[RMDB]
RNA sequence: GGGAACGACUCGAGUAGAGUCGAAAAGCUUGUAGCUUCGGCUACAAGCAUCUAAAAUCAGCCGUAAAUAAUUACGAGGCGUUACCGCUGAACGCCUCGAUACAACCACAUCAUUCGUGAUGUGGAAACUGUCUGAGAGAUUCGUCUCUCAGACAGUAAAAGAAACAACAACAACAAC
Reactivity to 2A3 in 0.01 (KOAc 150mM, MgCl2 10mM, bicine 150mM(pH8.5), 24C), signal-to-noise 3, nucleotides 027 to 126: g000c000u000u000g010u010a010g000c010u030u030c270g140g000c000u000a000c000a000a000g000c010a010u020c020u080a070a110a040a080u060c010a010g090c040c020g150u080a040a090a060u150a040a210u200u200a120c020g000a000g020g000c000g000u010u030a100c040c030g010c070u070g020a000a000c000g000c000c010u000c000g000a000u020a010c030a040a050c020c000a000c000a010u000c000a010u010u110c110g120u050g010a000u000g010u000g000g000a030a020
Reactivity to DMS in 0.01 (KOAc 150mM, MgCl2 10mM, bicine 150mM(pH8.5), 24C), signal-to-noise 2, nucleotides 027 to 126: g020c000u000u010g020u000a000g010c000u000u010c230g040g010c000u020a000c000a000a000g010c000a010u000c050u000a040a050a090a100u020c060a060g000c070c120g020u000a040a050a080u000a060a070u020u000a150c010g030a000g000g000c000g000u000u000a080c070c090g020c050u020g000a030a040c020g000c000c000u000c000g000a040u000a070c230a070a150c010c000a020c010a010u000c000a040u000u020c150g010u000g000a010u000g030u000g010g010a000a030
The record gives the reactivity of an RNA of 177 nucleotides to 2A3 and DMS. 2A3 adducts were read by reverse transcription with SuperScript II with manganese. Reactivities are rounded to 0.1 and cut off at 0 and 3. The reactions ran in a buffer of 150 mM KOAc, 10 mM MgCl2 and 150 mM bicine (pH 8.5), at 24 C.